[RMDB]
RNA sequence: GGGAACGACUCGAGUAGAGUCGAAAAGGAGAGCACUCCGGCCCGUAUGGUCGAGUAGCUCCCAGAGGGAGGAAGCCACACGGAGUAGAACAGAGAAAUCACCUCCAGAGGACCCCUUCAGCGAACAGUAAAAGUGUAACUUCGGUUACACUUUUACAAAAGAAACAACAACAACAAC
Reactivity to 2A3 in 0.01 (KOAc 150mM, MgCl2 10mM, bicine 150mM(pH8.5), 24C), signal-to-noise 1, nucleotides 027 to 126: g090g020a100g010a000g020c010a000c040u100c070c000g010g000c070c000c010g050u280a170u300g010g000u050c000g000a010g000u090a060g000c000u000c000c010c000a000g020a040g060g000g010a120g040g010a150a030g130c030c010a030c010a000c060g000g000a010g020u160a100g040a200a030c060a080g120a010g010a090a220a030u020c040a010c000c000u000c030c000a010g030a050g020g000a060c000c000c000c000u040u020c010a030g060c060g080a080a060c030a020
Reactivity to DMS in 0.01 (KOAc 150mM, MgCl2 10mM, bicine 150mM(pH8.5), 24C), signal-to-noise 2, nucleotides 027 to 126: g010g010a090g010a000g030c030a060c000u000c110c040g060g020c020c000c300g000u020a070u010g010g030u010c000g000a010g030u000a120g000c000u000c000c000c000a110g010a050g000g000g000a050g000g000a120a110g050c000c030a050c150a230c110g000g000a070g000u020a130g010a150a120c180a120g000a100g000a030a110a130u000c010a170c090c000u000c030c020a110g000a190g000g010a160c100c020c010c020u020u000c030a040g000c090g000a070a070c150a100